[RMDB]
RNA sequence: GGGAACGACUCGAGUAGAGUCGAAAAGAUAUGGAUAGACCAUCGAUCGGUCUGGUCGGAAACGACCAAACCGGGAGGUUCAUCCUAAGUCAAAAGACUUAGAACACCUUCGGGUGUUCUAAGUCAAGUUAUGACAUAACUUCGGUUAUGUCAUAACAAAAGAAACAACAACAACAAC
Reactivity to DMS in 0.01 (KOAc 150mM, MgCl2 10mM, bicine 150mM(pH8.5), 24C), signal-to-noise 5, nucleotides 027 to 126: g010a040u000a260u010g000g000a000u000a090g010a000c010c010a220u010c110g010a090u010c010g010g000u000c030u000g000g000u000c000g010g010a060a050a120c010g010a010c000c000a000a010a000c000c000g030g010g010a030g010g010u000u000c050a040u000c000c000u010a020a120g010u000c030a110a090a130a110g000a020c000u010u000a000g000a010a000c010a000c000c000u000u010c220g030g020g020u000g000u000u000c000u000a000a000g010u000c000a010a040
Reactivity to 2A3 in 0.01 (KOAc 150mM, MgCl2 10mM, bicine 150mM(pH8.5), 24C), signal-to-noise 2, nucleotides 027 to 126: g010a010u050a030u110g020g000a000u020a070g020a010c030c070a300u260c080g290a290u240c000g010g010u000c000u010g000g000u010c000g000g040a030a060a010c010g020a010c000c000a000a000a000c010c020g080g080g000a020g020g000u080u090c010a010u000c000c000u010a140a040g040u050c030a020a050a060a140g000a010c000u010u010a000g000a030a010c000a010c030c000u100u180c300g010g000g000u000g010u000u000c000u000a000a000g000u000c000a000a000

Structure probing data (DMS and 2A3) for a 177-nucleotide construct. For 2A3 the reverse transcriptase was SuperScript II with manganese. The reactions ran in a buffer of 150 mM KOAc, 10 mM MgCl2 and 150 mM bicine (pH 8.5), at 24 C. For 2A3, 5,176 sequencing reads were counted. DMS adducts were read by reverse transcription with MarathonRT.